[RMDB]
RNA sequence: GGGAACGACUCGAGUAGAGUCGAAAAUGAUUAUGUGCACCUCUGUGUUACUCUUGUUUUGACUGCAGUCCGCUGAACUUGGUUUCCUUUCAAACUGCCACACCCCAAGCGCUGCCCACUGCCGAGGGUCAUCCGUCGAGUUCGCUCGACGGAUGACAAAAGAAACAACAACAACAAC
Reactivity to 2A3 in 0.01 (KOAc 150mM, MgCl2 10mM, bicine 150mM(pH8.5), 24C), signal-to-noise 1, nucleotides 027 to 126: u150g030a000u000u140a040u200g000u030g080c090a050c060c070u150c010u020g070u000g000u110u010a040c000u000c010u000u050g110u090u070u030u230g130a120c000u030g050c000a010g000u000c000c000g000c000u010g010a080a150c120u010u000g070g060u000u010u280c000c050u000u150u000c130a140a060a060c000u000g000c050c030a150c080a180c110c000c000c000a000a000g000c050g020c000u000g070c040c040c000a030c080u030g000c000c000g000a000g000g150